The record gives the reactivity of an RNA of 177 nucleotides to DMS. The RNA was probed in 150 mM KOAc, 10 mM MgCl2 and 150 mM bicine (pH 8.5) at 24 C.
RNA sequence: GGGAACGACUCGAGUAGAGUCGAAAAGGAUUACCCCAAGUGUGAUAGGUCGAUGCCUAACAUAUUGAGGAUAGCAUCUUCAUGUUUGUUGGCACGAAAACACACCUGCUGUAAUCAAAGCCAGCGGCGCAGCCGGAGAAUUCGUUCUCCGGCUGCGAAAAGAAACAACAACAACAAC
Reactivity to DMS in 0.01 (KOAc 150mM, MgCl2 10mM, bicine 150mM(pH8.5), 24C), signal-to-noise 2, nucleotides 027 to 126: g000g030a070u000u000a050c000c020c030c020a010a050g020u000g010u010g000a060u000a120g030g050u000c020g000a150u010g010c010c010u020a020a020c040a000u010a020u000u000g000a050g010g010a030u000a080g020c030a300u000c000u010u010c000a010u000g010u010u020u000g000u000u000g010g000c000a000c010g000a030a020a010a000c030a000c000a020c000c030u000g000c030u000g050u000a000a010u020c020a110a120a160g000c020c040a160g000c220g020g000